The record gives the reactivity of an RNA of 207 nucleotides to 2A3. As a SHAPE reagent, 2A3 marks flexible, mostly unpaired nucleotides at the ribose 2'-OH. The RNA was probed in 150 mM KOAc, 10 mM MgCl2 and 150 mM bicine (pH 8.5) at 24 C. The 2A3 profile rests on 711 reads.
RNA sequence: GGGAACGACUCGAGUAGAGUCGAAAAGAAACAGGAUCGACAAGGGUGUAAAGAUCGCUCUUUUACUCGGCAUGAUACCACCGUUAUCAGGUCAACAGAGUAGUUGCAAAUGACAACAAUGCUCAGGAAGGGGUAGCACCGUUCGCGGUGCUACCAAGAAUCUCCACGGUUUCGACCGUGGAGAUUCAAAAGAAACAACAACAACAAC
Reactivity to 2A3 in 0.01 (KOAc 150mM, MgCl2 10mM, bicine 150mM(pH8.5), 24C), signal-to-noise 2, nucleotides 027 to 156: g020a010a140a040c130a070g000g080a110u040c020g000a000c040a000a060g120g010g040u130g020u120a120a100a000g010a030u080c030g040c040u000c010u000u080u040u040a120c050u040c040g000g010c000a010u040g050a050u050a070c000c020a040c060c030g040u030u080a050u120c050a000g050g040u080c000a070a030c020a170g000a000g030u030a010g000u020u020g040c070a230a100a220u210g000a150c000a000a000c000a060a250u110g000c000u040c060a010g090g080a090a020g040g110g000g000u010a000g010c000a000c000c000g000u090u060c180g010c020g100g000u000g070c000u000a000c000c000a010a000